[RMDB]
RNA sequence: GGGAACGACUCGAGUAGAGUCGAAAAUGAGAAGUCGUCAGUAGUUCGACGUGAGCAGAAGCCCGCCUCGAUAUGCUAUGUGGACGAGGGCAUGCCCAAGACACACCUUAACCCUAGCGGGUCGCAAGGCCACUACAAAAUUCGUUUUGUAGUGGCCAAAAGAAACAACAACAACAAC
Reactivity to DMS in 0.01 (KOAc 150mM, MgCl2 10mM, bicine 150mM(pH8.5), 24C), signal-to-noise 2, nucleotides 027 to 126: u010g010a060g000a090a170g000u000c000g000u020c040a010g000u010a060g010u000u000c000g000a040c100g010u000g000a050g030c040a130g010a120a280g000c030c010c030g040c020c050u010c040g000a060u000a040u020g010c010u000a090u010g010u010g000g030a090c040g020a220g010g020g020c040a030u010g000c000c010c040a060a170g020a020c080a090c050a040c080c060u000u000a100a120c010c000c000u000a120g010c100g000g040g010u010c120g020c130a090a110
Reactivity to 2A3 in 0.01 (KOAc 150mM, MgCl2 10mM, bicine 150mM(pH8.5), 24C), signal-to-noise 1, nucleotides 027 to 126: u170g000a020g050a170a000g090u040c030g000u050c030a040g040u040a040g080u180u040c050g000a000c000g030u050g030a030g000c070a010g000a300a020g060c020c020c000g000c050c000u020c020g000a060u040a040u300g000c030u050a040u110g300u030g120g110a070c030g020a080g020g000g010c030a020u080g030c000c010c000a040a010g080a040c050a010c000a010c070c030u040u070a060a060c000c000c020u000a020g040c000g070g000g020u000c020g010c040a080a000